Source information
Source: RMDB library TTRDES, as collected in RNAgym. Structure probing data (2A3) for a 177-nucleotide construct.
RNA sequence: GGGAACGACUCGAGUAGAGUCGAAAAGAUAUGGAGUUAUAGUUCAACAGCCAUACAUCGGAAACGAUGUCAUGGACAUGAAUAUAACUCCUAAGUCAAAACAACCCGAAUCUUCGGAUUCGGGUUGCCGACUGUUAACGUUCGCGUUAACAGUCGGAAAAGAAACAACAACAACAAC
Reactivity to 2A3 in 0.01 (KOAc 150mM, MgCl2 10mM, bicine 150mM(pH8.5), 24C), signal-to-noise 1, nucleotides 027 to 126: g000a000u030a030u030g010g010a030g010u000u000a070u050a170g210u010u000c170a300a200c120a300g000c010c000a000u010a010c000a010u020c010g040g000a010a010a010c000g010a010u000g000u100c120a000u010g010g030a070c050a300u300g000a030a010u000a010u010a000a010c010u000c000c000u000a000a000g000u000c030a050a020a120a230c040a000a010c030c000c040g000a010a000u020c010u060u220c300g260g100a010u000u000c000g000g080g000u030u000g010

2A3 adducts were read by reverse transcription with SuperScript II with manganese. The reactions ran in a buffer of 150 mM KOAc, 10 mM MgCl2 and 150 mM bicine (pH 8.5), at 24 C.